[RMDB]
RNA sequence: GGGAACGACUCGAGUAGAGUCGAAAAAUGUUUAUCGAAAUCAUCGGCGGUCUCCUUGCUAACAGCUUGGCAUUACUAUCUGACGGUAUCCAUAUGUUUAGCGACACAUUCUCAUUAGGUGUUGCACAUGCUCGCAACUUUUCGAAGUUGCGAGCAUAAAAGAAACAACAACAACAAC
Reactivity to DMS in 0.01 (KOAc 150mM, MgCl2 10mM, bicine 150mM(pH8.5), 24C), signal-to-noise 1, nucleotides 027 to 126: a090u000g010u000u010u000a060u010c050g000a040a080a050u010c100a030u000c020g050g010c140g020g000u020c090u020c030c010u010u000g010c110u000a070a040c080a130g030c080u000u000g030g040c210a100u000u010a060c080u000a100u000c050u000g000a140c080g000g000u000a020u010c030c030a040u000a040u000g030u000u000u010a050g020c000g030a010c020a010c030a060u000u000c040u000c100a180u030u000a090g010g000u000g000u000u010g000c020a060c190
Reactivity to 2A3 in 0.01 (KOAc 150mM, MgCl2 10mM, bicine 150mM(pH8.5), 24C), signal-to-noise 1, nucleotides 027 to 126: a000u080g000u000u040u050a110u090c000g020a040a110a040u070c010a030u070c070g060g030c020g020g120u000c020u020c030c000u010u030g000c000u030a080a010c020a080g080c020u040u090g020g090c010a020u090u130a100c010u050a090u000c030u070g050a020c030g060g020u020a020u010c010c030a060u030a030u210g050u040u230u200a060g040c040g030a010c000a000c000a030u140u020c060u030c060a120u080u120a120g050g020u020g040u000u030g020c020a000c000